[RMDB]
RNA sequence: GGGAACGACUCGAGUAGAGUCGAAAAAGCUUCGUACUUUGUUAUGAUGCUCACCAUAUCGUCUAACAAACUAAUUGAUAAUGUGCCUAUAGAUUUGAUCCUUAAUUAAGUUCGUCAUGCUCACCUACAUGUAUAUAGAGUUCGCUCUAUAUACAUGAAAAGAAACAACAACAACAAC
Reactivity to DMS in 0.01 (KOAc 150mM, MgCl2 10mM, bicine 150mM(pH8.5), 24C), signal-to-noise 9, nucleotides 027 to 126: a040g010c030u000u000c050g020u000a040c060u000u010u000g010u000u000a020u000g000a030u000g010c030u000c080a210c110c060a070u000a070u000c040g010u000c030u000a060a060c090a050a060a060c100u000a070a090u000u010g000a060u010a060a060u010g010u000g010c040c030u000a100u000a080g000a080u000u000u000g000a080u000c040c030u000u000a040a080u010u000a060a070g010u000u000c060g000u000c050a040u000g000c030u000c050a080c040c040u000a130
Reactivity to 2A3 in 0.01 (KOAc 150mM, MgCl2 10mM, bicine 150mM(pH8.5), 24C), signal-to-noise 6, nucleotides 027 to 126: a000g000c010u020u020c010g020u000a020c020u090u090u130g030u070u020a020u070g020a000u030g000c000u010c000a040c000c000a010u030a010u080c030g030u000c030u040a020a020c020a070a050a030c020u080a050a070u060u060g030a010u030a120a030u040g010u030g010c000c000u040a040u030a110g070a080u050u020u110g020a030u030c000c000u030u030a040a030u110u030a070a040g050u050u030c010g030u030c030a010u080g000c000u000c010a070c010c000u040a060
The record gives the reactivity of an RNA of 177 nucleotides to DMS and 2A3. The reactions ran in a buffer of 150 mM KOAc, 10 mM MgCl2 and 150 mM bicine (pH 8.5), at 24 C. For 2A3 the reverse transcriptase was SuperScript II with manganese. 2A3 is a SHAPE reagent: it acylates the 2'-hydroxyl of flexible nucleotides of all four kinds. For DMS the reverse transcriptase was MarathonRT.